[RMDB]
RNA sequence: GGGAACGACUCGAGUAGAGUCGAAAAGGCGAGCUGGCUGCCCGAAUUCCUAAGCGUUACCGGGGAGAUGUGAGGGCCUCCGGGGGCGGGAAACCUCAGGCCAGGCGCGCGCUGGCCCGCUCUACGGCUGUAGGAUUCUAUUCGUAGAAUCCUACAGAAAAGAAACAACAACAACAAC
Reactivity to 2A3 in 0.01 (KOAc 150mM, MgCl2 10mM, bicine 150mM(pH8.5), 24C), signal-to-noise 3, nucleotides 027 to 126: g030g000c030g010a010g030c030u030g070g000c040u040g030c000c010c010g040a030a060u040u020c000c020u090a250a070g040c030g110u110u080a110c010c010g000g010g030g010a210g020a090u150g060u040g100a080g030g070g020c020c010u000c010c010g000g000g010g030g020c020g020g000g000a030a060a070c020c010u060c040a010g050g000c020c020a040g080g030c010g020c000g000c000g060c040u010g040g060c000c010c010g020c030u050c030u060a080c090g090g000
Reactivity to DMS in 0.01 (KOAc 150mM, MgCl2 10mM, bicine 150mM(pH8.5), 24C), signal-to-noise 3, nucleotides 027 to 126: g020g010c010g000a080g030c040u000g010g020c030u000g000c030c040c050g010a090a150u000u000c010c020u000a150a150g010c050g010u010u010a130c040c020g000g020g000g010a130g010a100u010g010u010g010a090g000g010g010c080c040u000c040c020g010g010g000g000g010c050g000g000g000a050a070a080c080c050u010c050a070g010g010c020c040a090g000g010c060g020c060g000c030g000c010u000g010g010c040c010c030g000c120u000c050u000a070c170g010g010